[RMDB]
RNA sequence: GGGAACGACUCGAGUAGAGUCGAAAAGAAAAACAGGAAGAACCGUUGCUCUCAUACACCCCAUUGUAUUGGGUGGAUUGUUCUUUUAUACAUUGUGGGCAGGUUACUUAGGAUGUCCUCAAAGAAACCACCCUAUCCAUUUCGAUGGAUAGGGUGGAAAAGAAACAACAACAACAAC
Reactivity to DMS in 0.01 (KOAc 150mM, MgCl2 10mM, bicine 150mM(pH8.5), 24C), signal-to-noise 2, nucleotides 027 to 126: g020a090a030a030a060a010c120a060g020g000a060a040g030a090a020c020c070g000u020u000g000c000u010c000u020c040a020u070a190c000a030c100c020c010c210a220u020u050g000u020a180u000u000g000g000g020u000g000g000a090u000u000g000u000u000c020u000u050u010u040a070u020a120c060a080u010u000g030u000g020g020g000c020a100g010g000u000u000a060c150u010u030a080g050g000a070u050g000u010c010c000u010c100a040a070a030g000a120a130a220
Reactivity to 2A3 in 0.01 (KOAc 150mM, MgCl2 10mM, bicine 150mM(pH8.5), 24C), signal-to-noise 3, nucleotides 027 to 126: g070a060a100a010a000a000c100a030g010g100a080a010g060a020a020c040c050g070u080u130g110c000u000c000u040c020a000u050a070c070a020c010c080c010c060a080u100u110g160u150a100u110u200g080g000g020u020g000g000a040u030u070g010u020u040c040u050u100u010u000a120u050a080c030a080u100u080g000u020g000g000g000c010a000g020g030u110u070a190c040u080u050a060g060g140a010u030g000u010c000c000u040c050a070a030a000g060a020a050a000
This 177-nucleotide RNA was probed chemically with DMS and 2A3. The data come from the RNA Mapping Database (RMDB), library OK1LIB. Values are in units of 0.01, from 0 to 300, in steps of 10. Conditions: 150 mM KOAc, 10 mM MgCl2 and 150 mM bicine (pH 8.5), 24 C. The 2A3 profile rests on 1,896 reads. Values cover nucleotides 27 to 126.